The record gives the reactivity of an RNA of 207 nucleotides to 2A3 and DMS. For DMS, 1,420 sequencing reads were counted. The RNA was probed in 150 mM KOAc, 10 mM MgCl2 and 150 mM bicine (pH 8.5) at 24 C. DMS (dimethyl sulfate) methylates the pairing face of unpaired adenines and cytosines.

[RMDB]
RNA sequence: GGGAACGACUCGAGUAGAGUCGAAAAGCAACAGAUAACUGGAUGCAGCGUAGGAUUCUACGCAUAUCCAGUACGAAUGGUACCUGUAAAGAAAAUAAGGUUGGAUGUACAAGUACCAACAAUCGGUUAAGCGAUGGUGAUGUCAAUCACAUUUGCACAUGGCCCUAAUGUUCGCAUUAGGGCCAUGAAAAGAAACAACAACAACAAC
Reactivity to 2A3 in 0.01 (KOAc 150mM, MgCl2 10mM, bicine 150mM(pH8.5), 24C), signal-to-noise 2, nucleotides 027 to 156: g080c080a020a060c060a050g150a110u110a060a090c020u010g000g000a010u010g070c110a060g000c120g000u000a000g000g240a240u300u050c000u000a000c000g000c030a000u030a000u040c010c010a010g000u050a000c000g050a080a050u080g010g010u020a010c010c000u040g010u060a000a110a010g080a010a020a060a060u200a110a060g100g000u060u060g000g080a110u070g010u020a000c000a010a020g000u000a000c010c030a010a000c040a020a150u120c050g010g000u070u150a060a000g000c020g020a040u060g060g110u050g010a000u010g160u170c060a100a000u020c000a010c000a010u060u040u190g010c000a010
Reactivity to DMS in 0.01 (KOAc 150mM, MgCl2 10mM, bicine 150mM(pH8.5), 24C), signal-to-noise 1, nucleotides 027 to 156: g000c110a000a070c060a020g000a140u030a160a200c000u000g040g030a010u000g030c120a150g000c030g040u010a000g020g010a180u000u020c000u000a010c000g020c000a260u010a050u000c000c000a030g000u000a040c130g010a230a120u000g040g010u000a000c000c000u020g100u000a060a020a250g000a300a160a080a140u000a030a090g010g020u000u000g040g000a300u000g010u000a030c040a030a070g060u010a020c000c010a010a030c030a090a040u020c000g010g000u010u020a060a120g030c030g000a060u010g030g010u000g020a040u000g010u000c280a150a130u000c040a000c020a080u000u000u000g110c000a260

Source information: The 2A3 profile rests on 636 reads. DMS adducts were read by reverse transcription with MarathonRT.